[RMDB]
RNA sequence: GGGAACGACUCGAGUAGAGUCGAAAACACGCGUGCUACACUGAUGAGUAGAAUGGGUUAAUACUGCAUUUAUUGCUUUCCCUUGACCGAGAGGUCUGGGUAAUCCUUUAAUACUCAUCGUGCUGGGAGAAUAGAUAGGUUUCGACCUAUCUAUUCUAAAAGAAACAACAACAACAAC
Reactivity to DMS in 0.01 (KOAc 150mM, MgCl2 10mM, bicine 150mM(pH8.5), 24C), signal-to-noise 9, nucleotides 027 to 126: c060a120c180g010c140g020u010g010c030u000a100c010a020c010u030g020a010u000g000a010g010u000a010g000a100a110u010g000g000g020u000u000a040a140u020a080c150u010g010c000a010u000u010u010a090u040u000g000c010u000u010u010c160c000c000u010u010g000a010c000c000g010a210g000a200g000g010u000c000u000g000g000g000u010a020a010u000c000c000u000u010u010a070a140u000a000c000u000c000a010u000c000g010u000g000c080u000g000g010g010
Reactivity to 2A3 in 0.01 (KOAc 150mM, MgCl2 10mM, bicine 150mM(pH8.5), 24C), signal-to-noise 9, nucleotides 027 to 126: c090a020c030g130c040g100u140g060c020u040a020c010a010c030u190g010a000u000g000a000g000u010a000g020a090a060u070g010g010g010u030u040a070a040u100a220c080u060g020c020a040u060u180u190a200u300u140g000c000u030u060u090c010c000c000u020u180g000a000c000c000g010a010g010a020g070g000u000c000u000g000g000g010u010a010a020u020c000c000u030u050u040a070a030u010a010c000u000c000a000u000c000g000u010g000c040u040g010g030g020